An RNA of 207 nucleotides, treated with 2A3 and read out base by base.
RNA sequence: GGGAACGACUCGAGUAGAGUCGAAAAAUGAUACUGUAGUCUUAACCUUCAAUGAGUCAAUAUCGUUAGGCUCAUCUGACACCUGACGCACUCGUUCAGACUACAGUAUCUGUACGGUCCUUCAAUCAGGUGUCAGAUGAGCCUGAUAGAAGGACAACUCCAUGCAUCAGUUCGCUGAUGCAUGGAGAAAAGAAACAACAACAACAAC
Reactivity to 2A3 in 0.01 (KOAc 150mM, MgCl2 10mM, bicine 150mM(pH8.5), 24C), signal-to-noise 2, nucleotides 027 to 156: a010u070g020a000u000a000c000u000g000u000a030g050u000c000u050u010a020a050c020c050u210u170c260a200a230u300g040a080g030u070c080a160a180u050a060u240c120g010u070u090a000g010g000c000u010c000a000u020c000u000g000a000c020a000c010c000u000g090a050c090g050c130a110c090u210c090g080u020u010c020a000g000a000c000u000a030c020a000g000u020a010u010c000u000g020u020a010c070g030g040u020c020c040u020u090c120a070a120u050c010a050g010g000u030g000u000c000a000g000a020u000g000a000g000c000c000u020g000a000u000a000g000a050a030g030g000a000c020a050a030
High 2A3 reactivity points to a flexible backbone, as in loops and unpaired stretches.
Reactivities are given for positions 27 through 156.